[RMDB]
RNA sequence: GGGAACGACUCGAGUAGAGUCGAAAAGUCGCCGGGGUUUAGCAGCGCAUGCAUGGUGGCGGCGUUGGCGGUGGCCCCCGAAUGUGGUUGCACGUUGGCGUAUUCGGCGCCAAAGAGCGCUUUGACGCCAUAAGAUGCUCUUCGGAGCAUCUUAUGGAAAAGAAACAACAACAACAAC
Reactivity to DMS in 0.01 (KOAc 150mM, MgCl2 10mM, bicine 150mM(pH8.5), 24C), signal-to-noise 3, nucleotides 027 to 126: g000u010c020g000c020c030g010g010g000g040u010u030u040a170g010c010a040g000c010g010c020a010u030g050c040a130u040g000g010u030g010g020c030g000g000c030g000u030u000g020g030c010g000g000u010g010g020c000c020c000c020c040g050a060a080u040g050u010g010g010u010u000g010c070a080c060g040u020u000g010g010c030g030u000a090u020u020c110g000g010c010g000c000c010a040a060a080g000a110g020c020g000c020u000u010u030g000a100c110g000
Reactivity to 2A3 in 0.01 (KOAc 150mM, MgCl2 10mM, bicine 150mM(pH8.5), 24C), signal-to-noise 3, nucleotides 027 to 126: g050u030c010g050c050c000g000g000g040g000u050u090u240a120g000c030a010g040c020g030c060a110u140g020c030a030u130g200g040u140g170g010c020g000g020c030g010u020u100g040g060c000g080g060u040g060g040c000c000c000c000c000g060a110a020u170g050u090g080g000u070u110g020c020a000c100g040u050u030g040g000c000g010u020a160u040u230c080g060g000c000g000c000c000a080a070a000g030a030g010c000g010c050u100u040u180g030a020c060g000

Record summary: This 177-nucleotide RNA was probed chemically with DMS and 2A3. The RNA was probed in 150 mM KOAc, 10 mM MgCl2 and 150 mM bicine (pH 8.5) at 24 C. For DMS the reverse transcriptase was MarathonRT. For 2A3 the reverse transcriptase was SuperScript II with manganese.